[RMDB]
RNA sequence: GGGAACGACUCGAGUAGAGUCGAAAACAGCCUGGCAUAGCACGUUCCAUUCUGGCGUGUUGGGCGUCACCAGCGUGGCAAGGGGCAACAACUCGCCCAGCACCGUGCUGAUGGCUUCAGCGUCCAGUAUACUGCCAGCAUUCGUGCUGGCAGUAUAAAAAGAAACAACAACAACAAC
Reactivity to 2A3 in 0.01 (KOAc 150mM, MgCl2 10mM, bicine 150mM(pH8.5), 24C), signal-to-noise 2, nucleotides 027 to 126: c000a040g060c020c020u010g040g030c050a100u100a070g000c020a000c070g000u100u000c030c010a070u160u080c030u080g020g050c010g010u030g060u110u000g010g000g000c030g000u030c000a030c000c020a000g000c010g030u040g030g010c010a110a130g030g000g010g040c000a080a080c050a020a070c150u090c160g040c010c000c010a030g050c020a010c000c000g030u010g030c010u010g000a030u030g040g020c100u110u080c030a000g000c000g020u000c030c000a000g020
Reactivity to DMS in 0.01 (KOAc 150mM, MgCl2 10mM, bicine 150mM(pH8.5), 24C), signal-to-noise 3, nucleotides 027 to 126: c130a140g010c060c020u010g020g000c070a080u000a110g020c030a060c040g000u000u000c030c030a170u010u010c080u000g000g000c090g020u020g030u000u000g000g010g020c100g020u000c000a030c010c070a060g000c040g040u010g010g020c070a120a300g000g000g000g020c020a080a060c120a080a120c200u000c170g000c000c010c030a070g000c200a100c030c060g010u000g020c010u000g010a040u000g010g000c030u010u010c070a050g000c040g020u010c010c020a050g030